[RMDB]
Chemical mapping of a 207-nucleotide RNA with 2A3 and DMS.
For DMS, 4,616 sequencing reads were counted.
Values cover nucleotides 27 to 156.
It was measured as part of the RMDB library OK3TST.
RNA sequence: GGGAACGACUCGAGUAGAGUCGAAAAUGCUUGUGGGCAGGCCCUAGAGAGAGGCAAACUUUGACUCCAGGCACGCAGCAGGUUUAACUCCUCACUGGCUGGGUUCUGGGAGCUCUGGGCACACAGGAUAGGCACCAAGAACUAACACAUCCUGGAGUAGAUACAGAAGAUUCGUCUUCUGUAUCUAAAAAGAAACAACAACAACAAC
Reactivity to 2A3 in 0.01 (KOAc 150mM, MgCl2 10mM, bicine 150mM(pH8.5), 24C), signal-to-noise 3, nucleotides 027 to 156: u070g000c010u050u080g010u090g060g060g000c030a030g010g050c030c010c010u070a050g040a010g010a010g010a030g080g000c080a080a100a120c090u120u120u110g040a020c000u020c000c000a010g020g020c030a010c110g040c010a030g010c010a010g000g050u060u130u090a050a040c020u030c020c020u070c060a070c030u020g090g010c010u030g020g000g080u030u030c010u010g010g020g030a090g010c020u010c020u100g040g050g020c070a010c020a000c000a040g050g040a120u160a150g030g030c040a010c030c000a010a060g010a030a020c050u080a100a000c050a020c010a140u040c000c020u000g010g000a020g010
Reactivity to DMS in 0.01 (KOAc 150mM, MgCl2 10mM, bicine 150mM(pH8.5), 24C), signal-to-noise 3, nucleotides 027 to 156: u030g010c010u000u000g030u010g010g000g030c050a090g010g010c040c010c010u020a090g010a090g030a150g020a060g030g000c110a080a100a110c090u010u000u030g010a170c010u010c000c000a060g010g000c080a070c070g040c030a050g020c090a080g010g000u010u010u000a120a180c150u000c030c010u020c060a050c060u000g010g050c030u020g010g030g010u000u030c020u010g020g000g000a130g020c010u020c030u000g000g020g030c060a080c080a140c000a050g000g010a100u010a100g020g000c040a130c020c030a030a160g010a030a120c030u010a040a110c040a070c090a150u010c010c020u010g010g010a150g000